[RMDB]
RNA sequence: GGGAACGACUCGAGUAGAGUCGAAAAACAAGUGGUGGUAGUUCGCCACUCUAAGGGGACGCCUUUAGAAGAAGAGGCUAGGGGGUAUUCCGGUGUGGGAUACUUAGUAAUAUGCAACGCUAAUUGCUCAAGGAUAGAUGAUUCGUCAUCUAUCCAACAUCCCCCAGUAGUUCGCUACUGGGGGAUGAAAAGAAACAACAACAACAAC
Reactivity to 2A3 in 0.01 (KOAc 150mM, MgCl2 10mM, bicine 150mM(pH8.5), 24C), signal-to-noise 1, nucleotides 027 to 156: a000c100a070a010g000u000g050g010u010g050g040u080a070g030u150u140c010g010c000c000a000c000u020c010u020a030a060g000g000g040g010a010c050g010c000c010u000u060u090a110g040a130a000g020a060a000g010a050g070g030c010u050a030g120g000g030g060g010u020a100u100u040c020c010g030g060u100g060u080g070g000g000a010u030a050c010u020u030a000g030u020a030a060u090a070u260g030c040a070a020c050g110c090u090a100a000u080u170g000c010u070c090a100a040g010g010a000u000a010g000a040u000g000a010u070u010c150g060u000c000a000u000c000u000a000u020c000c000a000a000